[RMDB]
An RNA of 207 nucleotides, treated with 2A3 and read out base by base. 2A3 adducts were read by reverse transcription with SuperScript II with manganese. The reactions ran in a buffer of 150 mM KOAc, 10 mM MgCl2 and 150 mM bicine (pH 8.5), at 24 C. For 2A3, 378 sequencing reads were counted. Values cover nucleotides 27 to 156. Reactivities are rounded to 0.1 and cut off at 0 and 3.

RNA sequence: GGGAACGACUCGAGUAGAGUCGAAAACGUCAGAACUUUGGUCCUCAUGAAGAUAUCUGGAAUCCUAGACAUUUUGACGAGCUAUUUAGUCUGACGGAGAACGAUUCGACCGAUCCACUUGCGGUGUGCACGCUGCAAUGGACCAAGGACUAUUGGAGGUAGACUGCUUUUUCGAAAGCAGUCUACCAAAAGAAACAACAACAACAAC
Reactivity to 2A3 in 0.01 (KOAc 150mM, MgCl2 10mM, bicine 150mM(pH8.5), 24C), signal-to-noise 1, nucleotides 027 to 156: c000g000u000c000a000g020a110a170c070u080u010u040g000g020u140c000c100u020c040a070u090g020a120a020g000a070u060a030u050c040u110g030g050a100a070u090c020c020u040a040g020a040c030a020u070u000u000u110g080a040c050g020a020g000c020u000a010u220u080u050a040g070u030c000u000g000a020c010g000g000a130g010a000a000c030g050a070u060u180c070g010a030c020c060g070a110u030c010c000a030c230u000u010g000c010g000g000u050g080u210g110c250a110c260g000c020u000g000c000a000a100u050g010g000a010c020c030a010a060g060g060a040c050u080a160u250u090g010g080a130